[RMDB]
The record gives the reactivity of an RNA of 177 nucleotides to 2A3 and DMS. It was measured as part of the RMDB library OK2TRN. The reactions ran in a buffer of 150 mM KOAc, 10 mM MgCl2 and 150 mM bicine (pH 8.5), at 24 C. For DMS the reverse transcriptase was MarathonRT. The 2A3 profile rests on 816 reads. For 2A3 the reverse transcriptase was SuperScript II with manganese.

RNA sequence: GGGAACGACUCGAGUAGAGUCGAAAAGUUUACUGUGAUGAAAUUUUUAUGGUUCACGCCGGACAGUGGAUGGCUUGUCUCAAUUUAAUGAAAUGUGACGUGAUUAGAUGUUAUGGAGACAAAAAUCCUCACAUGAGUGAUUCGUCACUCAUGUGAGAAAAGAAACAACAACAACAAC
Reactivity to 2A3 in 0.01 (KOAc 150mM, MgCl2 10mM, bicine 150mM(pH8.5), 24C), signal-to-noise 1, nucleotides 027 to 126: g010u000u040u000a050c020u020g050u080g050a130u020g040a040a170a210u220u160u000u040u080a120u150g000g000u050u020c020a010c020g040c000c020g000g030a030c000a010g000u010g080g020a060u050g040g000c050u050u070g040u000c000u000c000a030a110u010u080u070a130a070u140g120a200a000a050u090g060u030g020a060c120g000u030g100a190u050u100a060g010a070u000g010u000u000a100u170g120g010a010g000a030c000a000a100a030a030a050u000c010
Reactivity to DMS in 0.01 (KOAc 150mM, MgCl2 10mM, bicine 150mM(pH8.5), 24C), signal-to-noise 2, nucleotides 027 to 126: g000u010u000u000a070c010u000g020u010g010a110u000g020a040a050a120u020u000u000u010u030a090u010g030g010u000u000c060a040c130g010c030c040g000g020a050c040a050g010u010g010g030a030u000g000g000c140u000u000g020u000c000u000c020a060a080u000u010u010a040a060u000g000a080a090a100u000g000u010g020a050c090g010u000g000a080u000u000a040g000a060u000g000u000u000a090u000g000g010a060g000a000c030a000a050a070a090a050u000c050